The record gives the reactivity of an RNA of 177 nucleotides to DMS and 2A3. The DMS profile rests on 2,299 reads. Source: RMDB library TTRDEL, as collected in RNAgym. The 2A3 profile rests on 5,882 reads.
RNA sequence: GGGAACGACUCGAGUAGAGUCGAAAAGAUAUGGACACGCUCAGACAUGCGAUAUCGGAAACGAUUUCGCAACAGCUGACGUGUCCUAAGUCAAAGAAAUUUCAUGGCUUCGGCCAUGAAAUUUCAACCCAUCAAGGAUGUUCGCAUCCUUGAUGGGAAAAGAAACAACAACAACAAC
Reactivity to DMS in 0.01 (KOAc 150mM, MgCl2 10mM, bicine 150mM(pH8.5), 24C), signal-to-noise 3, nucleotides 027 to 126: g000a010u000a230u000g010g000a000c000a010c000g000c300u010c010a010g010a140c120a210u000g000c010g000a030u000a010u000c000g010g010a030a050a080c010g010a010u000u000u000c000g030c000a020a040c300a130g000c010u000g000a030c000g010u000g010u000c000c000u000a000a050g010u000c020a110a160a160g010a000a010a010u000u020u000c000a000u000g000g020c000u010u010c200g030g010c000c000a000u010g000a000a000a020u000u000u000c000a120a180
Reactivity to 2A3 in 0.01 (KOAc 150mM, MgCl2 10mM, bicine 150mM(pH8.5), 24C), signal-to-noise 2, nucleotides 027 to 126: g000a000u020a000u070g000g000a000c010a010c010g100c130u010c020a050g080a300c110a220u040g000c000g000a000u000a000u040c000g000g000a000a020a000c000g010a010u000u050u000c000g060c000a010a030c070a050g050c010u000g010a000c000g000u020g000u000c000c000u000a000a000g010u000c010a040a040a160g020a000a010a000u000u000u000c010a010u000g010g000c000u060u080c300g040g000c000c010a000u000g000a000a000a000u000u000u000c000a000a000